[RMDB]
RNA sequence: GGGAACGACUCGAGUAGAGUCGAAAAGAUAUGGACCGAACUACGCUUGAAGAGGCGUUGAAAUCGGAAACGAUGGAGCCUUGGAGGAGCGCGGUCCUAAGUCAAAACUAGUGCUUCGGCACUAGAAGAAUGGGUAAUGCUUCGGCAUUACCCAUUCAAAAGAAACAACAACAACAAC
Reactivity to 2A3 in 0.01 (KOAc 150mM, MgCl2 10mM, bicine 150mM(pH8.5), 24C), signal-to-noise 1, nucleotides 027 to 126: g030a000u040a090u140g010g010a000c030c020g040a060a040c060u120a020c230g020c000u020u050g030a090a030g030a020g040g000c030g190u190u040g020a070a040a000u000c000g010g050a040a020a050c010g020a010u020g000g030a030g050c040c000u020u040g060g000a070g180g100a020g000c000g020c050g010g010u020c000c010u000a140a000g020u030c000a000a030a180a150c000u000a000g000u020g030c000u100u060c180g120g000c020a000c020u000a010g010a020a030
Reactivity to DMS in 0.01 (KOAc 150mM, MgCl2 10mM, bicine 150mM(pH8.5), 24C), signal-to-noise 1, nucleotides 027 to 126: g000a070u000a290u000g040g000a000c010c000g070a080a080c150u000a250c020g020c000u000u030g010a300a270g000a000g000g020c000g000u030u050g000a090a090a000u000c000g000g010a150a060a160c000g000a000u000g000g000a210g000c000c000u000u000g000g000a300g000g000a030g000c020g030c080g010g000u020c000c000u000a040a100g000u000c120a060a070a030a080c000u000a030g000u000g020c000u000u000c230g010g000c000a000c000u000a000g000a040a110